[RMDB]
RNA sequence: GGGAACGACUCGAGUAGAGUCGAAAAGCUGCCUCUGACGUCCUUAAGGGUGGUAAAGCGGGUCUCCCCCGGAAACAGGGCCGCGCCUGGCGCUCGCACGGGUAUGCGUGGGGGUCGACCCUGGCCGAAUCAGUAUCCCUUUCGAGGGAUACUGAUUAAAAGAAACAACAACAACAAC
Reactivity to DMS in 0.01 (KOAc 150mM, MgCl2 10mM, bicine 150mM(pH8.5), 24C), signal-to-noise 3, nucleotides 027 to 126: g000c040u000g000c010c020u000c030u010g010a110c090g010u010c010c010u000u000a180a150g010g000g010u010g010g020u010a030a070a140g010c080g020g000g000u000c030u010c010c010c010c010c010g010g010a060a070a090c090a040g010g000g010c030c050g010c100g000c020c030u000g000g010c070g020c060u010c070g000c090a080c080g010g000g030u010a080u020g020c020g030u010g020g000g000g000g020u000c160g010a050c020c000c010u000g000g010c020c050g010
Reactivity to 2A3 in 0.01 (KOAc 150mM, MgCl2 10mM, bicine 150mM(pH8.5), 24C), signal-to-noise 2, nucleotides 027 to 126: g030c020u030g040c000c000u060c020u030g010a020c010g040u050c030c020u070u110a090a100g030g050g000u070g000g020u090a110a080a040g100c040g000g010g060u020c010u000c000c000c020c010c020g120g060a050a080a020c010a050g010g030g030c020c000g020c030g020c020c000u020g060g000c040g020c030u110c060g020c030a120c090g100g030g000u120a090u250g020c010g010u060g010g060g010g010g030u070c030g020a050c000c000c020u020g020g030c000c000g060